[RMDB]
RNA sequence: GGGAACGACUCGAGUAGAGUCGAAAACGCUAUUCGUAGCGCGUAUAUCCUAAGUCUGUGCGAUAACCGUUUGACGCAUGUUGUCAGUCGGAAACGACUUGGAUUUACAUGCCGAGGUUAUCAGCACAGAUAUGGAGUGUCAGGGAUUCGUCCCUAAUCUCCGUUACUCUUUCGAGAGUAACGGAGAAAAAGAAACAACAACAACAAC
Reactivity to 2A3 in 0.01 (KOAc 150mM, MgCl2 10mM, bicine 150mM(pH8.5), 24C), signal-to-noise 2, nucleotides 027 to 156: c020g000c030u020a030u130u110c300g180u090a020g000c040g010c020g110u120a090u040a030u080c020c000u030a190a000g080u000c000u000g000u010g000c000g000a000u020a000a000c010c070g090u060u180u300g060a050c100g000c020a000u000g000u010u010g030u000c000a010g000u000c010g080g000a140a080a060c010g010a010c000u040u160g130g020a030u190u140u090a000c000a000u000g000c010c000g040a010g000g010u000u000a010u000c000a000g010c000a000c000a000g000a000u010a000u000g010g010a050g050u080g130u220c180a100g000g000g030a000u050u090c200g100u000c080c000c000u000a050a120
Reactivity to DMS in 0.01 (KOAc 150mM, MgCl2 10mM, bicine 150mM(pH8.5), 24C), signal-to-noise 1, nucleotides 027 to 156: c000g070c020u000a060u000u010c300g030u010a010g040c030g010c010g010u010a090u010a090u000c000c000u000a060a250g030u000c000u000g070u010g030c000g020a060u000a010a030c000c000g010u000u000u020g040a140c180g040c010a000u020g010u000u000g000u000c010a090g010u000c010g000g000a140a130a260c000g010a010c000u000u000g000g010a050u000u000u000a030c000a010u000g000c020c000g020a070g000g000u000u000a020u000c000a050g050c000a020c010a000g040a010u040a100u020g020g000a120g020u000g000u000c080a090g000g000g010a080u000u020c230g020u000c010c000c010u000a070a140